[RMDB]
RNA sequence: GGGAACGACUCGAGUAGAGUCGAAAAUCUACUCCCAAUGCCAUCUUUAUUUCUGAUAGAAAAAUCAAGAAAUACCCUUGUAUGGUAGGUCCUGAUUAUGCUUACUUCAAUGGUGCUAUCAUCCGUGCUCUUUGAUAAUCUUCGGAUUAUCAAAGAGAAAAGAAACAACAACAACAAC
Reactivity to 2A3 in 0.01 (KOAc 150mM, MgCl2 10mM, bicine 150mM(pH8.5), 24C), signal-to-noise 4, nucleotides 027 to 126: u020c020u040a060c030u030c010c010c000a010a040u070g000c010c020a040u020c040u050u150u040a050u020u060u000c000u010g030a020u020a090g300a110a200a050a050a020u030c040a070a050g010a030a030a000u030a030c020c000c000u060u090g050u130a040u050g030g000u010a040g010g040u040c010c020u030g020a060u040u110a070u190g040c030u080u050a080c010u050u080c050a060a140u130g020g040u030g020c010u030a010u070c010a030u020c030c010g050u040g040
Reactivity to DMS in 0.01 (KOAc 150mM, MgCl2 10mM, bicine 150mM(pH8.5), 24C), signal-to-noise 3, nucleotides 027 to 126: u000c110u000a120c130u000c000c040c010a090a180u010g000c020c020a030u010c040u000u000u000a030u010u000u010c020u000g010a040u000a090g000a050a060a080a100a030u000c010a030a030g010a010a020a020u000a030c240c060c080u000u010g000u010a050u000g010g000u000a040g000g020u000c060c040u000g000a060u000u010a040u010g030c050u000u000a050c050u000u000c090a060a120u000g030g020u000g010c050u000a020u000c050a050u010c050c080g000u000g020
Annotation: An RNA of 177 nucleotides, treated with 2A3 and DMS and read out base by base. For DMS the reverse transcriptase was MarathonRT.